[RMDB]
Chemical mapping of a 177-nucleotide RNA with 2A3 and DMS. Source: RMDB library OK2TRN, as collected in RNAgym. DMS adducts were read by reverse transcription with MarathonRT. The reactions ran in a buffer of 150 mM KOAc, 10 mM MgCl2 and 150 mM bicine (pH 8.5), at 24 C.
RNA sequence: GGGAACGACUCGAGUAGAGUCGAAAACAGACCUGGCCGGGAAGCCAGCCUCCCCCUCAGAGAAGGCUAAAGGCUGCACGGCCCAGCUCUGGCGGGAGAGGAACCGUGAUUGCAGCCUGGCUCGUCCUCUCGUAAGGACAUUCGUGUCCUUACGAGAAAAAGAAACAACAACAACAAC
Reactivity to 2A3 in 0.01 (KOAc 150mM, MgCl2 10mM, bicine 150mM(pH8.5), 24C), signal-to-noise 1, nucleotides 027 to 126: c050a000g060a080c020c010u050g020g000c010c010g210g000g030a080a000g010c020c000a020g030c000c000u010c010c010c000c010c030u000c000a040g010a000g000a050a010g020g000c000u050a140a020a070g070g010c030u030g000c020a020c060g000g020c000c030c000a040g000c030u010c000u050g080g040c060g070g020g000a260g000a000g010g060a030a060c080c030g060u080g060a210u070u260g040c000a000g050c000c000u010g000g030c000u000c010g090u040c000c010
Reactivity to DMS in 0.01 (KOAc 150mM, MgCl2 10mM, bicine 150mM(pH8.5), 24C), signal-to-noise 3, nucleotides 027 to 126: c080a090g000a160c130c040u000g010g000c000c000g000g040g040a090a130g020c000c000a090g000c030c000u010c010c010c000c000c030u010c060a070g010a070g030a290a110g010g020c020u000a140a100a040g010g010c000u010g020c020a070c080g020g000c050c000c040a060g020c040u000c010u010g010g010c180g000g000g000a090g000a050g020g000a050a060c030c050g010u000g000a150u030u000g010c020a070g020c020c030u000g000g000c020u020c270g010u010c070c040